Background
An RNA of 207 nucleotides, treated with 2A3 and read out base by base.

RNA sequence: GGGAACGACUCGAGUAGAGUCGAAAACGAUCUGUUCGCAGAUCGAGCUACGGAGACGUAGCGAAGCGAUCCGGUCCUCGGAGGAUCGCGCUACUUGAGAUAUAACCAGAUCCGCCACUCCUAGGAUCUGGCCGAGGACGUAGAGACAGGAGUGGGAGAUUACGGCGUAGUUCGCUACGCCGUAAUCAAAAGAAACAACAACAACAAC
Reactivity to 2A3 in 0.01 (KOAc 150mM, MgCl2 10mM, bicine 150mM(pH8.5), 24C), signal-to-noise 2, nucleotides 027 to 156: c000g010a000u010c000u000g000u030u090c180g070c090a000g000a010u000c000g010a030g000c010u000a000c000g000g050a060g010a030c000g000u010a010g000c000g000a110a000g010c000g000a000u020c000c000g030g090u050c010c010u010c010g020g030a050g040g010a000u000c000g000c000g030c030u150a160c060u100u160g070a040g110a100u110a050u070a190a100c010c010a020g010a030u000c000c000g040c030c010a030c010u020c000c000u070a030g000g000a020u010c000u000g000g000c030c000g000a000g000g000a010c010g050u060a080g030a010g010a160c030a070g000g000a020g000u020g010g000g000a130
Notes:
Reactivities are rounded to 0.1 and cut off at 0 and 3. The RNA was probed in 150 mM KOAc, 10 mM MgCl2 and 150 mM bicine (pH 8.5) at 24 C. The 2A3 profile rests on 1,518 reads. It was measured as part of the RMDB library OK3TST.